[RMDB]
RNA sequence: GGGAACGACUCGAGUAGAGUCGAAAACUUUAGUUCUUCUCAUCACUAUUUUAGUUUCAAACCCACGUAUAUAGCAUUCGUAUACAUCGGUUUCUGAAUACGUAGCUAUUUCAAUCACUGGAUGGUAAGCUGAUGCCUAGUUCGCUAGGCAUCAGCUAAAAGAAACAACAACAACAAC
Reactivity to 2A3 in 0.01 (KOAc 150mM, MgCl2 10mM, bicine 150mM(pH8.5), 24C), signal-to-noise 2, nucleotides 027 to 126: c000u120u080u100a040g000u100u100c050u050u050c020u000c010a050u100c000a000c040u060a180u070u100u020u290a020g010u000u020u130c100a060a070a080c000c080c000a060c140g070u020a070u020a020u000a050g030c180a260u070u110c020g000u000a000u050a040c080a020u020c010g010g070u170u100u070c160u100g070a000a000u060a000c000g000u020a040g010c000u000a010u020u010u040c130a090a040u080c070a050c170u080g100g000a180u150g120g000u040a090